Source: RMDB library OK2TST, as collected in RNAgym.
The record gives the reactivity of an RNA of 177 nucleotides to 2A3 and DMS.
In probing experiments dimethyl sulfate is read out at A N1 and C N3, which are open when not base-paired.
The 2A3 profile rests on 1,725 reads.
[RMDB]
RNA sequence: GGGAACGACUCGAGUAGAGUCGAAAACGCGCGAGGCCGGGCGCAUCGCCAUGCAUUAUUUCGGGCGCUCGCCGGAGGUCUGGCUGAAGGAUGGCGUUUCGCCGGUCAGCGAGGCCGAUCUGGCUGACCCGUGACUAGUAUUCGUACUAGUCACGGGAAAAGAAACAACAACAACAAC
Reactivity to 2A3 in 0.01 (KOAc 150mM, MgCl2 10mM, bicine 150mM(pH8.5), 24C), signal-to-noise 2, nucleotides 027 to 126: c040g030c020g000c030g040a050g070g000c000c020g100g020g000c030g040c050a070u080c030g000c000c010a030u090g030c020a080u130u120a100u130u280u170c040g060g000g020c040g000c050u040c050g020c050c020g030g000a010g000g000u010c020u020g160g000c000u030g000a030a030g210g100a260u220g000g010c050g010u060u090u120c040g020c010c000g000g000u000c000a000g010c020g040a020g000g000c010c010g010a060u000c010u050g050g020c000u030g060a040
Reactivity to DMS in 0.01 (KOAc 150mM, MgCl2 10mM, bicine 150mM(pH8.5), 24C), signal-to-noise 2, nucleotides 027 to 126: c110g000c070g010c010g020a090g000g020c040c070g000g000g000c030g030c090a060u000c050g010c030c030a050u010g030c100a160u000u000a170u010u020u000c030g020g000g000c020g000c100u000c120g000c030c000g030g020a080g000g020u000c000u000g010g030c020u000g010a040a060g000g010a070u020g000g030c000g020u000u000u010c030g000c000c000g000g020u000c010a000g020c010g010a020g010g020c000c010g010a080u010c040u010g020g000c000u010g000a200